Chemical mapping of a 207-nucleotide RNA with 2A3. As a SHAPE reagent, 2A3 marks flexible, mostly unpaired nucleotides at the ribose 2'-OH. Values cover nucleotides 27 to 156. The reactions ran in a buffer of 150 mM KOAc, 10 mM MgCl2 and 150 mM bicine (pH 8.5), at 24 C.
[RMDB]
RNA sequence: GGGAACGACUCGAGUAGAGUCGAAAAAAGACUGUUGACGUCCUCAGAAAUCGAUAGUACUUCAUGAAACAUUUUGAACCAUCGGUCCUAUGCAGCAGUAUCAGCAGCUACUCUAUGCCAAGGUUUCAGUUAUAUUGUCGGACGCCGAGCGGAAGAGCUCCGGCGUCCAUUUCGAUGGACGCCGGAGAAAAGAAACAACAACAACAAC
Reactivity to 2A3 in 0.01 (KOAc 150mM, MgCl2 10mM, bicine 150mM(pH8.5), 24C), signal-to-noise 1, nucleotides 027 to 156: a000a030g090a030c030u040g000u020u010g010a030c010g010u000c030c010u050c000a000g030a030a040a040u030c000g000a000u050a060g030u030a060c030u010u050c010a070u010g020a020a120a070c120a090u160u060u000u170g040a050a000c040c000a010u010c030g050g010u050c000c000u020a010u050g000c010a000g000c010a010g020u030a030u300c010a000g030c000a000g000c020u300a030c000u080c060u060a030u220g120c000c020a100a030g050g000u030u020u050c010a050g010u110u010a040u000a010u260u020g090u120c030g000g000a020c040g010c090c010g030a020g030c120g050g000a090a020g180a010g040